[RMDB]
RNA sequence: GGGAACGACUCGAGUAGAGUCGAAAAGGAGAUUGUUUACAGUAUUCUUGUCUGAAAGGAUGAGAGCUGUAAUUUAAGAGCGCAAUCUUCACUUCGCCCCUUUUCUGCAUAAUCCUUGUUUAGCCAACUAUAAUACCUUGUUCGCAAGGUAUUAUAGAAAAGAAACAACAACAACAAC
Reactivity to 2A3 in 0.01 (KOAc 150mM, MgCl2 10mM, bicine 150mM(pH8.5), 24C), signal-to-noise 7, nucleotides 027 to 126: g000g000a010g000a010u020u010g040u060u040u010a000c000a000g010u020a170u100u070c000u000u010g010u000c010u030g070a100a050a040g030g000a000u010g000a010g000a000g000c000u000g000u010a010a010u070u090u070a100a030g050a010g050c060g000c030a000a000u000c000u010u010c020a050c080u090u100c060g100c010c000c000c000u030u060u080u070c050u060g020c020a050u040a130a070u130c010c020u070u070g030u080u100u050a030g020c010c020a030a040
Reactivity to DMS in 0.01 (KOAc 150mM, MgCl2 10mM, bicine 150mM(pH8.5), 24C), signal-to-noise 9, nucleotides 027 to 126: g010g000a020g010a030u000u000g010u000u000u000a000c000a010g010u000a120u020u000c000u000u000g010u000c000u000g010a150a120a150g000g000a010u000g010a000g010a020g000c000u000g000u000a010a020u000u010u020a100a140g010a140g030c250g010c010a010a010u000c010u000u000c020a110c130u000u000c140g000c040c010c020c120u010u000u000u000c040u000g000c060a060u010a090a080u000c040c050u000u000g010u000u000u000a100g010c060c090a080a190